Notes
Chemical mapping of a 207-nucleotide RNA with DMS and 2A3.
RNA sequence: GGGAACGACUCGAGUAGAGUCGAAAACGCUGGGCGAGCAGUAGACAUGCCUGUACUGAAGCGCGCACGGUACAAGGGCAACAGCUACAGCUCGCCUGUGCUGAAGCGCGCACGGCAACCGAAAGGUGCGAAAGAUUCUCACGUUCGCGUGAGAAUCCGGUUAAAUAGUCUUCGGACUAUUUAACCGAAAAGAAACAACAACAACAAC
Reactivity to DMS in 0.01 (KOAc 150mM, MgCl2 10mM, bicine 150mM(pH8.5), 24C), signal-to-noise 1, nucleotides 027 to 156: c050g040c030u000g000g030g020c000g010a060g050c010a150g020u000a050g000a070c030a200u020g010c000c000u010g030u010a030c020u010g000a050a040g010c030g090c010g000c000a300c000g000g000u000a000c000a210a170g040g000g000c000a050a140c060a110g010c010u020a030c000a130g030c000u000c020g000c000c010u010g010u000g020c000u000g010a050a060g000c020g050c030g000c000a300c000g040g040c030a130a120c010c000g060a100a090a170g020g060u000g030c020g000a110a140a110g010a010u010u000c000u000c000a010c000g010u000u000c190g000c070g060u000g000a030g000a000a010u000c000
Reactivity to 2A3 in 0.01 (KOAc 150mM, MgCl2 10mM, bicine 150mM(pH8.5), 24C), signal-to-noise 5, nucleotides 027 to 156: c020g000c020u020g000g010g000c000g000a000g000c010a020g000u000a000g020a030c100a220u300g010c000c000u050g000u000a010c010u010g050a250a060g000c000g000c000g000c010a020c030g010g000u010a010c020a120a300g080g000g000c170a300a050c060a190g000c000u000a010c000a020g000c000u010c000g000c000c000u000g000u000g000c000u020g020a120a050g010c000g000c000g020c010a000c010g010g000c010a010a010c000c000g030a050a050a050g010g000u010g000c000g040a100a060a030g010a000u000u000c000u000c000a000c000g050u090u070c270g030c000g070u000g000a010g010a000a000u000c010

DMS (dimethyl sulfate) methylates the pairing face of unpaired adenines and cytosines.